RNA sequence: GGGAACGACUCGAGUAGAGUCGAAAACUCGGUAUGGCAUGAUGAGAGCGAAAGUUAAGGUUCGUGUACCAUUGAGGGCUUCGAGCUACUCAUACAUACCUGUAGUCAGAUUGUACUGCGCGCCGAAAUUUUUAUCUUUAUUCGUAAAGAUAAAAAUAAAAGAAACAACAACAACAAC
Reactivity to DMS in 0.01 (KOAc 150mM, MgCl2 10mM, bicine 150mM(pH8.5), 24C), signal-to-noise 9, nucleotides 027 to 126: c020u000c040g010g000u010a040u010g000g010c090a020u000g000a030u010g000a050g000a100g010c000g000a080a040a070g020u010u020a100a130g010g020u000u010c220g010u010g020u030a070c040c020a130u020u020g000a080g010g010g010c020u010u020c000g000a140g010c000u000a070c010u000c000a030u010a050c020a020u000a040c020c010u020g010u020a050g010u000c050a110g000a100u020u010g010u010a060c030u000g000c030g010c000g000c020c020g010a040a070
Reactivity to 2A3 in 0.01 (KOAc 150mM, MgCl2 10mM, bicine 150mM(pH8.5), 24C), signal-to-noise 7, nucleotides 027 to 126: c010u000c010g000g010u070a040u060g040g020c060a020u030g010a000u020g020a010g000a000g020c010g040a090a010a000g030u070u070a050a050g040g030u020u050c030g010u040g040u070a060c010c010a020u020u120g060a080g000g040g000c000u030u020c010g020a030g000c010u100a120c000u010c000a010u020a020c010a000u020a010c000c020u020g030u030a030g020u010c030a010g010a120u050u090g030u040a000c010u000g000c020g000c000g000c000c010g010a040a030